[RMDB]
RNA sequence: GGGAACGACUCGAGUAGAGUCGAAAAACAUGUCGAACACGCGCUUUUCGCGCCUCGCCAAUAGGAAAGCCGAUCCUUACGCGGCCAUUCGAAAGAUGGUCGCGGAACGUGCGGGACACCAAUGGUGUACCCGAUCUCGGUUCGCCGAGAUCGGGUAAAAAGAAACAACAACAACAAC
Reactivity to DMS in 0.01 (KOAc 150mM, MgCl2 10mM, bicine 150mM(pH8.5), 24C), signal-to-noise 1, nucleotides 027 to 126: a070c140a110u000g000u010c000g010a110a130c160a140c140g020c030g000c090u000u010u000u020c130g030c030g040c000c140u000c050g000c070c010a030a080u040a130g000g010a010a100a080g030c020c010g000a060u020c010c030u000u010a110c000g010c000g020g020c000c000a010u020u000c020g020a110a130a180g000a010u000g020g010u000c010g030c000g040g000a040a060c110g000u010g030c010g000g000g000a130c070a040c000c020a100a060u030g000g050u000g000
Reactivity to 2A3 in 0.01 (KOAc 150mM, MgCl2 10mM, bicine 150mM(pH8.5), 24C), signal-to-noise 1, nucleotides 027 to 126: a000c080a110u190g050u110c020g080a040a010c100a010c110g070c000g000c000u000u140u170u180c060g000c000g000c000c000u000c020g000c000c010a060a130u060a090g000g060a090a030a050g080c010c020g020a040u010c020c010u040u170a020c020g000c000g000g000c030c000a040u120u130c020g080a070a060a050g020a000u010g000g000u000c000g000c000g010g000a000a000c020g040u150g040c010g030g010g010a010c000a010c030c000a060a070u110g090g020u020g090
An RNA of 177 nucleotides, treated with DMS and 2A3 and read out base by base. Conditions: 150 mM KOAc, 10 mM MgCl2 and 150 mM bicine (pH 8.5), 24 C. Source: RMDB library OK2TST, as collected in RNAgym.